[RMDB]
RNA sequence: GGGAACGACUCGAGUAGAGUCGAAAAGAAGGGUGAAAGCCAUUGAUACUGUAGUGGAAAUUAUAAAUAAGAAGAGUUCUGAGUUGCUUAAGCAGAACUAAAAUAAAAAGACAAGCAUUAUUACAAACAUGGCGAGGUAAGUUCGCUUACCUCGCAACAGAACGUAGGAGUUCGCUCCUACGUUCUGAAAAGAAACAACAACAACAAC
Reactivity to 2A3 in 0.01 (KOAc 150mM, MgCl2 10mM, bicine 150mM(pH8.5), 24C), signal-to-noise 2, nucleotides 027 to 156: g010a020a030g050g000g000u030g000a060a030a000g010c000c000a020u020u080g030a020u070a120c090u080g040u080a050g020u040g030g040a060a030a010u100u080a030u200a260a110a030u140a080a000g040a040a030g020a000g010u010u000c010u000g030a010g080u060u070g050c010u180u090a130a030g020c010a000g000a010a000c030u050a030a010a000a080u090a000a030a010a010a000g050a040c050a020a010g000c000a000u010u080a010u000u050a070c080a030a030a000c020a020u060g090g000c000g000a000g000g000u000a000a000g010u020u060c150g000c140u000u000a000c000c000u000c010g000c000a000a000